Structure probing data (2A3 and DMS) for a 177-nucleotide construct.
RNA sequence: GGGAACGACUCGAGUAGAGUCGAAAAGAAGAGAGUCGACGCAAGCGACGAUAACUGCGGAACGGUAACCGUAGUACCGUAAGGUCAUGGCACGCGAAAGCGAAAGAACGAAGCAUGCCAUAAGAGACACUACUAGGCCGUUCGCGGCCUAGUAGUGAAAAGAAACAACAACAACAAC
Reactivity to 2A3 in 0.01 (KOAc 150mM, MgCl2 10mM, bicine 150mM(pH8.5), 24C), signal-to-noise 3, nucleotides 027 to 126: g130a050a010g100a000g000a000g010u030c000g020a090c030g030c100a070a030g120c010g070a040c110g000a080u100a110a060c010u030g000c000g000g070a050a030c070g190g000u130a120a040c000c040g020u100a000g010u010a080c010c010g000u020a070a000g050g020u020c010a010u020g000g010c040a000c010g000c020g100a160a040a040g020c050g020a210a000a140g160a130a030c070g000a000a000g010c010a000u040g000c030c000a030u070a000a000g040a020g000a000
Reactivity to DMS in 0.01 (KOAc 150mM, MgCl2 10mM, bicine 150mM(pH8.5), 24C), signal-to-noise 2, nucleotides 027 to 126: g000a070a050g000a100g000a200g010u000c020g000a110c100g040c140a210a090g000c020g030a050c030g000a060u080a100a060c040u000g020c000g000g000a090a130c170g070g050u020a040a090c010c060g050u000a040g000u000a050c000c000g000u030a090a160g000g060u050c050a050u000g000g010c000a010c030g070c000g010a020a120a290g010c030g010a050a190a100g000a120a060c080g010a130a080g000c010a030u020g000c000c030a000u000a070a050g020a110g000a160

Description:
The data come from the RNA Mapping Database (RMDB), library OK1LIB.